[RMDB]
RNA sequence: GGGAACGACUCGAGUAGAGUCGAAAAGAUAUGGAGGAACUUAAGUGAUGUCCAUCGGAAACGAUGGUCAUCUAAAGUUCUCCUAAGUCAAAACACGAUAUCUAGAGUUCGCUCUAGAUAUCGUGAAUCAUGAACAAUGGUUCGCCAUUGUUCAUGAAAAAGAAACAACAACAACAAC
Reactivity to 2A3 in 0.01 (KOAc 150mM, MgCl2 10mM, bicine 150mM(pH8.5), 24C), signal-to-noise 6, nucleotides 027 to 126: g030a020u060a050u140g020g040a080g120g120a050a050c010u100u060a270a190g220u110g150a000u010g000u000c000c000a000u000c000g020g020a080a040a020c010g000a000u000g000g000u000c000a010u000c000u000a020a030a000g000u010u020c000u030c010c000u050a180a020g060u050c040a020a020a110a130c000a000c000g000a000u000a010u000c000u000a000g000a000g040u110u140c290g080c160u000c000u000a000g000a000u000a000u000c000g000u000g000a000a010
Reactivity to DMS in 0.01 (KOAc 150mM, MgCl2 10mM, bicine 150mM(pH8.5), 24C), signal-to-noise 5, nucleotides 027 to 126: g010a020u000a300u010g000g010a020g020g010a020a010c000u000u010a110a120g020u000g010a010u000g000u000c000c000a010u000c000g010g000a110a080a170c000g010a010u000g020g010u000c000a000u000c000u000a060a040a030g000u000u000c000u000c000c000u000a020a160g000u010c040a090a080a110a230c000a010c000g000a000u000a000u000c000u000a000g000a010g020u000u010c260g010c010u000c000u000a000g000a000u000a000u000c000g010u000g000a030a080